[RMDB]
RNA sequence: GGGAACGACUCGAGUAGAGUCGAAAAUUCACAAUUGCUGAUGUUUUUCCUUGGGCUGAGAGGACCAGCCAAGUCAAAGGACCUAUUUGGCAUUUUAAGAUGAUGAAAUAUUUAGGUUUCAAGAAACAGGCACUCAAAGGUAAUCAACAUUCCAAGACGUAUAGCCAGGUUUCGACCUGGCUAUACGAAAAGAAACAACAACAACAAC
Reactivity to 2A3 in 0.01 (KOAc 150mM, MgCl2 10mM, bicine 150mM(pH8.5), 24C), signal-to-noise 2, nucleotides 027 to 156: u100u140c050a050c050a060a140u140u100g030c020u040g050a050u020g090u000u010u070u100u050c010c000u040u030g010g010g010c000u000g000a020g010a040g080g080a050c040c000a010g010c000c000a040a010g020u030c040a050a010a090g000g000a010c000c000u010a050u050u040u050g030g000c020a020u020u010u070u150a140a130g110a060u180g000a010u040g010a010a130a050u080a040u020u040u040a010g000g000u010u030u210c060a120a030g030a020a040a000c000a000g000g030c010a010c030u110c090a110a030a070g030g000u010a010a090u040c010a010a140c000a040u150u030c000c000a000a030g050a040
Chemical mapping of a 207-nucleotide RNA with 2A3. The reactions ran in a buffer of 150 mM KOAc, 10 mM MgCl2 and 150 mM bicine (pH 8.5), at 24 C. It was measured as part of the RMDB library OK3TST.